[RMDB]
RNA sequence: GGGAACGACUCGAGUAGAGUCGAAAAGGCGUCUUCGCUGCCUCGGCCGCCUUGCACUGACCGGUAGCCGCCGUAAUCGCGGCAUUGUUCCCAUAAACGGAUGUGGGUGUGGGUGUCGAAGUAGCAGCCCUAAUGAUUAGUUCGCUAAUCAUUAGGGAAAAGAAACAACAACAACAAC
Reactivity to DMS in 0.01 (KOAc 150mM, MgCl2 10mM, bicine 150mM(pH8.5), 24C), signal-to-noise 9, nucleotides 027 to 126: g010g010c090g010u000c070u000u000c140g010c020u000g000c010c020u000c020g010g010c030c050g020c010c000u000u010g030c030a030c020u000g000a100c020c010g000g010u000a120g010c010c010g030c000c100g010u000a100a080u010c300g010c010g010g000c000a090u010u010g010u000u000c000c000c000a160u010a040a080a110c040g000g000a100u010g020u010g000g010g020u000g030u000g010g000g020u000g010u000c020g010a030a040g020u000a030g010c030a240g010
Reactivity to 2A3 in 0.01 (KOAc 150mM, MgCl2 10mM, bicine 150mM(pH8.5), 24C), signal-to-noise 9, nucleotides 027 to 126: g080g030c070g100u060c070u130u080c080g010c010u010g010c000c000u010c000g010g000c030c040g060c030c000u060u220g000c010a010c020u070g100a060c010c000g030g040u060a030g000c010c010g010c010c010g070u110a060a060u180c080g000c000g000g000c000a010u030u250g010u020u010c000c000c000a030u120a020a180a010c020g020g030a080u140g090u210g300g020g010u020g010u020g010g040g000u040g010u010c010g000a010a000g000u020a000g000c010a020g010
Notes: Structure probing data (DMS and 2A3) for a 177-nucleotide construct. It was measured as part of the RMDB library OK2TRN. Conditions: 150 mM KOAc, 10 mM MgCl2 and 150 mM bicine (pH 8.5), 24 C. For 2A3 the reverse transcriptase was SuperScript II with manganese.